[RMDB]
RNA sequence: GGGAACGACUCGAGUAGAGUCGAAAACAAGUUGAGAGUUGGGCCAUGGGAUUUGGGCGAAGGCUCAGAUCUCCUGGUCACUAGAAUGGAGGGAUCCGCAUGAGGCUGGUUUUACAGAGCAGUGAACACUUCCUUCUCUUGACAGUGGAGGGAUCACCAGUGAUGUAUUGUUCGCAAUACAUCACUGAAAAGAAACAACAACAACAAC
Reactivity to 2A3 in 0.01 (KOAc 150mM, MgCl2 10mM, bicine 150mM(pH8.5), 24C), signal-to-noise 2, nucleotides 027 to 156: c050a050a040g030u040u080g060a070g010a030g050u150u090g010g020g030c020c010a020u030g010g000g010a000u010u000u020g010g010g010c110g100a220a060g280g000c010u000c010a010g000a000u000c000u000c010c000u010g000g010u010c000a000c010u020a010g100a110a130u090g020g010a020g030g000g020a050u040c060c020g000c140a060u090g020a000g060g020c020u050g050g000u040u110u110u010a070c050a010g060a010g040c070a040g000u030g070a100a010c060a030c100u010u040c010c000u000u020c020u000c000u020u090g050a020c080a070g040u070g030g040a060g020g020g000a030u070c050a010c050
Reactivity to DMS in 0.01 (KOAc 150mM, MgCl2 10mM, bicine 150mM(pH8.5), 24C), signal-to-noise 2, nucleotides 027 to 156: c050a050a200g010u000u010g000a080g030a080g000u000u000g080g000g000c010c000a030u000g010g020g000a030u000u000u000g000g020g000c000g040a210a170g050g010c010u000c000a030g000a040u000c000u000c000c040u010g010g020u000c030a040c010u010a100g020a060a090u000g010g000a090g010g020g000a110u000c050c030g000c080a100u020g000a100g020g010c030u010g010g000u010u000u000u000a150c030a080g000a070g000c060a100g000u010g000a040a100c070a030c030u000u010c000c010u010u000c020u000c070u000u020g010a050c070a060g020u010g000g010a100g000g000g020a090u010c030a060c100
Chemical mapping of a 207-nucleotide RNA with 2A3 and DMS.
Reactivities are given for positions 27 through 156.
Source: RMDB library ARCHII, as collected in RNAgym.
The 2A3 profile rests on 1,662 reads.
For 2A3 the reverse transcriptase was SuperScript II with manganese.
The reactions ran in a buffer of 150 mM KOAc, 10 mM MgCl2 and 150 mM bicine (pH 8.5), at 24 C.